The record gives the reactivity of an RNA of 177 nucleotides to DMS and 2A3.

RNA sequence: GGGAACGACUCGAGUAGAGUCGAAAACUUCAAACAUUUCGUCUAAAGUUAUUUGGACUUGAUCUUUUAAUUGGUCAUUUCCUUUCUUGAAACCGAUACCGUAUUGUUCAGAUGAGAUUUAAACAUAAAUUUAUGAUCGGUUCGCCGAUCAUAAAUUAAAAGAAACAACAACAACAAC
Reactivity to DMS in 0.01 (KOAc 150mM, MgCl2 10mM, bicine 150mM(pH8.5), 24C), signal-to-noise 3, nucleotides 027 to 126: c060u000u050c090a140a060a080c080a060u000u010u020c020g010u000c000u010a160a020a040g000u040u030a060u040u020u000g000g000a000c020u010u000g020a010u000c000u010u040u070u020a070a130u040u050g010g000u020c010a010u010u000u000c000c010u000u000u000c020u000u020g010a050a150a090c070c060g000a030u000a040c090c110g010u020a100u020u010g060u010u020c060a130g000a060u000g000a080g000a210u040u020u070a030a060a090c100a070u030a050
Reactivity to 2A3 in 0.01 (KOAc 150mM, MgCl2 10mM, bicine 150mM(pH8.5), 24C), signal-to-noise 6, nucleotides 027 to 126: c020u130u100c030a040a090a080c060a110u070u090u040c010g020u010c020u090a020a020a040g050u090u080a170u170u130u100g000g000a010c000u000u000g010a010u030c020u060u270u130u160a200a260u180u230g010g000u010c000a000u000u000u030c000c000u010u030u010c000u020u050g040a060a010a010c040c020g030a040u060a100c030c060g130u130a140u130u130g060u080u060c080a070g030a200u050g030a030g000a100u070u160u290a120a170a020c080a040u220a100
The reactions ran in a buffer of 150 mM KOAc, 10 mM MgCl2 and 150 mM bicine (pH 8.5), at 24 C. For DMS the reverse transcriptase was MarathonRT. Source: RMDB library OK1LIB, as collected in RNAgym. For DMS, 3,787 sequencing reads were counted.